[RMDB]
Notes:
The data come from the RNA Mapping Database (RMDB), library RNAMAK. The record gives the reactivity of an RNA of 207 nucleotides to 2A3 and DMS. The reactions ran in a buffer of 150 mM KOAc, 10 mM MgCl2 and 150 mM bicine (pH 8.5), at 24 C. For DMS the reverse transcriptase was MarathonRT. As a SHAPE reagent, 2A3 marks flexible, mostly unpaired nucleotides at the ribose 2'-OH.
RNA sequence: GGGAACGACUCGAGUAGAGUCGAAAAGGGGUCGAAACCUCAGUAUCCGUGUUGUCAGCUCCCUGGAGGCUGAAGCCUCCACGGCCUCCAGGAGCUUGGAUUUACACGGAGAACCGGUUUCGACGGAGGCACCCAAAGACAGUCUUCGGACUGUCAACAUAUAACAAUGGUUCGCCAUUGUUAUAUGAAAAGAAACAACAACAACAAC
Reactivity to 2A3 in 0.01 (KOAc 150mM, MgCl2 10mM, bicine 150mM(pH8.5), 24C), signal-to-noise 2, nucleotides 027 to 156: g070g010g000g000u000c000g000a000a000a000c000c010u000c020a000g010u010a010u000c000c000g000u010g000u020u050g090u020c090a040g020c010u140c080c030c030u000g010g010a010g000g010c000u020g020a090a050g060c020c030u000c010c020a030c000g000g000c000c000u000c010c000a000g000g000a000g000c010u000u100g010g000a000u050u090u250a000c000a000c000g000g000a020g000a000a000c000c020g000g000u000u010u000c010g000a000c000g010g010a000g010g020c020a040c010c010c000a020a040a010g000a000c000a010g000u060c000u040u150c300g110g000a000c000u000g000u000c000a000a000
Reactivity to DMS in 0.01 (KOAc 150mM, MgCl2 10mM, bicine 150mM(pH8.5), 24C), signal-to-noise 2, nucleotides 027 to 156: g020g000g040g020u010c030g040a000a010a060c000c010u010c020a140g030u000a100u000c000c010g010u010g020u000u000g030u010c050a100g020c010u000c070c020c040u010g000g010a030g030g060c000u000g030a050a110g020c050c030u010c010c020a150c070g000g000c000c000u000c000c010a060g000g000a010g000c010u000u030g050g010a090u000u000u000a030c010a000c040g000g000a030g020a090a120c190c300g010g010u000u000u000c010g010a010c030g000g020a090g030g020c080a130c010c000c000a070a140a180g000a020c000a020g010u000c000u000u010c300g040g000a010c010u020g010u000c000a040a230